[RMDB]
RNA sequence: GGGAACGACUCGAGUAGAGUCGAAAAGAUAUGGAAGAAUGGUGCAAGGACCUCGGAAACGAGAAGUCUGAUGACCACUGCAUUCUUCCUAAGUCAAAAGGGCGGACAAGUUCGCUUGUCCGCCCAACAGAAUAUAGAAGUUCGCUUCUAUAUUCUGAAAAGAAACAACAACAACAAC
Reactivity to DMS in 0.01 (KOAc 150mM, MgCl2 10mM, bicine 150mM(pH8.5), 24C), signal-to-noise 1, nucleotides 027 to 126: g010a020u010a300u000g010g000a010a000g020a010a000u010g010g020u010g000c070a080a150g000g010a020c010c000u000c000g000g010a050a080a190c000g000a020g000a100a090g000u000c000u010g000a090u030g000a140c300c030a010c010u010g010c030a010u000u000c000u010u000c000c000u000a020a110g010u020c020a090a080a080a100g000g000g000c000g000g000a030c000a070a030g010u010u020c300g010c040u000u000g020u000c060c000g030c000c010c030a010a040

This 177-nucleotide RNA was probed chemically with DMS. For DMS, 1,140 sequencing reads were counted. Values cover nucleotides 27 to 126. Conditions: 150 mM KOAc, 10 mM MgCl2 and 150 mM bicine (pH 8.5), 24 C.